[RMDB]
RNA sequence: GGGAACGACUCGAGUAGAGUCGAAAACGUGAACAUCGCUCUGCUAAGUCCCGUCGUUCUUCCAGUCAGAGCGAGAUUGUAAGCAACCUUAUGCGCAAUGAAGACAUAGAGGGACUUCUCCACGAAGCGGAGCACCCAUAUUCGUAUGGGUGCUCCGAAAAGAAACAACAACAACAAC
Reactivity to 2A3 in 0.01 (KOAc 150mM, MgCl2 10mM, bicine 150mM(pH8.5), 24C), signal-to-noise 2, nucleotides 027 to 126: c100g080u140g130a090a030c090a040u000c010g000c000u000c010u030g000c020u000a000a000g070u010c020c000c020g060u090c000g010u010u060c060u100u040c010c000a000g040u160c050a000g000a010g070c020g000a020g000a000u050u090g000u040a080a010g040c020a040a080c000c060u070u060a000u090g010c010g000c020a050a040u110g030a050a050g000a020c010a030u150a050g080a030g020g020g030a020c000u040u000c010u000c000c000a040c140g000a010a010g070
Reactivity to DMS in 0.01 (KOAc 150mM, MgCl2 10mM, bicine 150mM(pH8.5), 24C), signal-to-noise 1, nucleotides 027 to 126: c150g000u000g010a240a130c080a040u000c000g010c000u000c000u000g000c190u000a150a040g000u010c060c000c040g030u000c040g010u000u000c000u000u000c010c000a120g000u060c150a000g040a050g000c000g000a180g010a000u000u000g000u000a180a070g030c000a120a130c020c000u010u010a000u000g000c000g000c170a060a050u040g000a190a070g000a000c090a100u000a060g030a160g000g000g000a020c040u000u000c000u000c070c010a130c130g000a100a100g030
This 177-nucleotide RNA was probed chemically with 2A3 and DMS. The 2A3 profile rests on 1,037 reads. Values cover nucleotides 27 to 126. 2A3 adducts were read by reverse transcription with SuperScript II with manganese. It was measured as part of the RMDB library OK1LIB.